[RMDB]
RNA sequence: GGGAACGACUCGAGUAGAGUCGAAAAAGUGGGCAGCCUAGCACCGUUGUCGACAACACUCUCGUGCUCAUGGUGGCUUUCCUGUACGCAUAUAUCCACAAAACUGGUGAUGUGGAUCUCUCACUCAACGUAUCGAAUUGUUCGCAAUUCGAUACGUAAAAGAAACAACAACAACAAC
Reactivity to 2A3 in 0.01 (KOAc 150mM, MgCl2 10mM, bicine 150mM(pH8.5), 24C), signal-to-noise 4, nucleotides 027 to 126: a030g090u130g010g010g000c000a020g040c010c010u070a040g000c030a040c050c030g030u040u080g060u090c060g050a060c030a110a010c010a040c030u100c010u020c080g040u030g010c000u050c080a070u120g040g010u040g040g000c020u020u020u000c010c000u010g080u100a030c060g000c100a010u160a010u020a000u170c000c000a040c040a030a110a050a070c160u140g060g060u130g090a100u070g020u020g000g000a030u000c010u020c000u010c010a060c020u080c030a050
Reactivity to DMS in 0.01 (KOAc 150mM, MgCl2 10mM, bicine 150mM(pH8.5), 24C), signal-to-noise 4, nucleotides 027 to 126: a090g030u000g010g000g000c060a090g000c030c050u000a090g030c040a070c040c100g020u010u000g020u010c050g020a120c120a070a160c100a050c070u000c080u010c130g030u000g000c030u000c160a080u000g020g010u010g010g000c030u000u000u010c020c010u010g020u010a060c090g010c080a080u010a080u010a060u010c010c000a020c040a010a040a120a130c140u000g010g010u010g010a160u000g010u010g000g000a000u010c100u010c020u000c030a110c110u010c150a110
An RNA of 177 nucleotides, treated with 2A3 and DMS and read out base by base. The DMS profile rests on 3,386 reads. The RNA was probed in 150 mM KOAc, 10 mM MgCl2 and 150 mM bicine (pH 8.5) at 24 C.